[RMDB]
RNA sequence: GGGAACGACUCGAGUAGAGUCGAAAAUGUGCAGACGUCGUCGUAGACCGCGCGAACGCAAUGUUCACGGUCGGCGAAGCUUUCGUAAAAGUAGCGUUCUGUCAGGCCGGCGUGGCGGCACACUGCGGCAGAUACGACCAUUCGUGGUCGUAUCUGCAAAAGAAACAACAACAACAAC
Reactivity to DMS in 0.01 (KOAc 150mM, MgCl2 10mM, bicine 150mM(pH8.5), 24C), signal-to-noise 1, nucleotides 027 to 126: u000g060u000g020c000a050g000a110c060g030u010c060g020u000c020g030u000a150g050a090c060c000g010c180g000c210g000a040a010c000g000c180a070a070u020g020u010u000c000a300c020g010g030u000c000g030g010c000g020a110a040g010c030u000u030u000c100g050u000a070a110a150a090g020u000a020g000c000g060u010u000c040u000g020u000c050a140g000g000c050c010g000g030c060g010u000g010g000c030g000g000c030a050c070a100c070u000g020c000g000
Reactivity to 2A3 in 0.01 (KOAc 150mM, MgCl2 10mM, bicine 150mM(pH8.5), 24C), signal-to-noise 1, nucleotides 027 to 126: u290g010u060g000c010a030g080a130c090g020u040c010g000u010c010g030u090a060g090a170c000c000g000c000g030c040g000a010a010c000g010c100a230a130u290g000u050u040c050a030c020g040g030u030c010g010g020c000g020a030a000g000c000u110u200u140c080g090u110a010a000a100a120g020u020a030g030c060g080u040u030c070u120g090u050c060a110g000g050c020c030g060g010c030g030u000g020g000c000g020g000c050a030c000a010c010u050g020c030g020
Conditions: 150 mM KOAc, 10 mM MgCl2 and 150 mM bicine (pH 8.5), 24 C. Structure probing data (DMS and 2A3) for a 177-nucleotide construct. For 2A3 the reverse transcriptase was SuperScript II with manganese. DMS adducts were read by reverse transcription with MarathonRT. For DMS, 820 sequencing reads were counted. Values are in units of 0.01, from 0 to 300, in steps of 10.